RNA sequence: GGGAACGACUCGAGUAGAGUCGAAAAAGAACAAAUUCAAAUAUCAAUGCAAACGGUGGGCAUGUUAUGCUGAAAAGGCUCGAGGGACAAGUCAAGGUACUAGCUAUUUCGUGAGUUCCUCGGGCAAGACAAUUGCAAUGUUCGCAUUGCAAUUGUCAAAAGAAACAACAACAACAAC
Reactivity to DMS in 0.01 (KOAc 150mM, MgCl2 10mM, bicine 150mM(pH8.5), 24C), signal-to-noise 1, nucleotides 027 to 126: a190g010a090a090c080a070a050a100u000u000c040a010a060a040u000a020u010c080a040a010u000g010c080a110a010a060c160g000g030u010g010g000g030c050a010u010g010u010u030a060u030g020c050u000g030a070a030a130a090g000g020c010u000c000g030a020g010g000g020a010c010a030a220g020u000c020a060a130g010g040u000a030c080u010a130g000c180u030a020u010u000u000c190g040u000g000a300g010u000u000c000c010u000c000g000g000g010c030a000a000
Reactivity to 2A3 in 0.01 (KOAc 150mM, MgCl2 10mM, bicine 150mM(pH8.5), 24C), signal-to-noise 1, nucleotides 027 to 126: a000g070a050a010c040a030a070a050u150u090c020a000a100a030u130a060u010c050a110a060u090g030c000a080a020a030c030g050g050u080g090g020g010c010a000u000g030u070u090a040u040g020c000u080g060a070a070a050a080g170g000c000u010c000g000a010g020g010g030a000c000a000a020g010u080c040a050a000g060g000u010a040c000u020a060g060c020u010a090u050u060u010c090g010u060g050a010g010u000u000c000c000u000c000g000g010g000c000a000a000
The record gives the reactivity of an RNA of 177 nucleotides to DMS and 2A3. 2A3 is a SHAPE reagent: it acylates the 2'-hydroxyl of flexible nucleotides of all four kinds. 2A3 adducts were read by reverse transcription with SuperScript II with manganese. The reactions ran in a buffer of 150 mM KOAc, 10 mM MgCl2 and 150 mM bicine (pH 8.5), at 24 C. The data come from the RNA Mapping Database (RMDB), library RFMREP.